An RNA of 207 nucleotides, treated with DMS and 2A3 and read out base by base. For 2A3, 2,549 sequencing reads were counted. Values cover nucleotides 27 to 156. The RNA was probed in 150 mM KOAc, 10 mM MgCl2 and 150 mM bicine (pH 8.5) at 24 C. 2A3 adducts were read by reverse transcription with SuperScript II with manganese.

[RMDB]
RNA sequence: GGGAACGACUCGAGUAGAGUCGAAAAGAGUGGGUAACCACCGGCGCGCGUCACUGAUAUAUCCACCGGGGGGUAAGGGGAGAAAAGGAUACAGCGCGACGAAGUUAGCACGCUGCCCCGUAAGGCUUGAAGAGUGUAGUGUUCGCACUACACUCAAACCCAUUUAUCAGUUCGCUGAUAAAUGGGUAAAAGAAACAACAACAACAAC
Reactivity to DMS in 0.01 (KOAc 150mM, MgCl2 10mM, bicine 150mM(pH8.5), 24C), signal-to-noise 2, nucleotides 027 to 156: g000a120g010u020g000g020g020u000a060a090c020c010a080c110c010g020g000c010g000c030g070c060g030u010c080a200c060u020g020a120u010a090u010a120u000c020c000a050c030c030g030g020g050g000g030g040u000a050a070g000g020g010g030a080g000a080a130a130a060g020g010a210u000a120c030a060g030c000g030c000g010a100c060g000a080a080g000u000u000a110g030c030a040c020g000c010u000g060c020c010c010c020g040u010a080a070g020g000c080u000u000g010a130a160g000a060g020u000g010u000a010g040u000g000u010u010c190g020c000a010c010u010a010c000a010c000u010c000a010a030
Reactivity to 2A3 in 0.01 (KOAc 150mM, MgCl2 10mM, bicine 150mM(pH8.5), 24C), signal-to-noise 3, nucleotides 027 to 156: g090a020g000u060g000g020g070u100a100a090c030c000a020c040c000g040g000c000g000c000g000c000g020u040c030a030c120u020g060a060u060a020u030a030u260c030c030a070c120c080g010g000g000g010g000g050u070a130a060g000g040g040g000a020g040a010a100a010a010g040g000a020u040a120c030a040g000c010g000c000g020a000c010g010a020a010g030u050u100a010g050c040a010c170g010c020u060g010c000c000c000c000g000u030a030a040g030g030c060u080u100g080a200a090g000a040g000u000g000u010a000g000u000g020u040u050c100g020c040a000c000u000a000c000a000c000u000c010a000a000
It was measured as part of the RMDB library M2RFPK.